[RMDB]
RNA sequence: GGGAACGACUCGAGUAGAGUCGAAAAGAUAUGGACGAUCUCCGAAGAACGUACGUAACAUCUUUCGGAAACGAAAGUGGUACGGGAGGAGUGAGUCCUAAGUCAAAGGGACGGUUCGCCGUCCCAAUCGUUACACCAUGUUCGCAUGGUGUAACGAAAAAGAAACAACAACAACAAC
Reactivity to 2A3 in 0.01 (KOAc 150mM, MgCl2 10mM, bicine 150mM(pH8.5), 24C), signal-to-noise 2, nucleotides 027 to 126: g010a010u100a030u050g000g000a010c000g000a000u000c010u000c000c040g090a190a010g040a050a010c020g010u040a000c010g000u060a060a050c030a300u170c060u030u030u020c010g010g020a090a060a010c000g010a020a000a020g010u020g010g010u010a010c020g010g000g030a040g020g000a000g020u010g020a010g000u000c010c000u010a010a000g040u010c040a050a100a150g020g000g000a000c010g040g090u060u110c300g070c120c010g010u000c020c000c010a000a010
Reactivity to DMS in 0.01 (KOAc 150mM, MgCl2 10mM, bicine 150mM(pH8.5), 24C), signal-to-noise 4, nucleotides 027 to 126: g030a070u000a300u000g010g010a030c020g000a250u000c000u000c000c000g020a120a130g020a170a160c030g000u000a010c010g000u010a050a100c150a020u020c010u000u000u000c000g020g000a070a090a150c000g010a010a000a000g020u010g000g000u010a000c010g000g000g010a110g010g000a020g010u010g010a300g000u000c010c000u010a000a080g010u000c060a050a100a090g020g000g010a010c010g020g010u010u020c240g050c020c000g000u000c000c000c000a000a010

Structure probing data (2A3 and DMS) for a 177-nucleotide construct.
The data come from the RNA Mapping Database (RMDB), library TTRDEL.
For DMS, 2,974 sequencing reads were counted.
The 2A3 profile rests on 4,152 reads.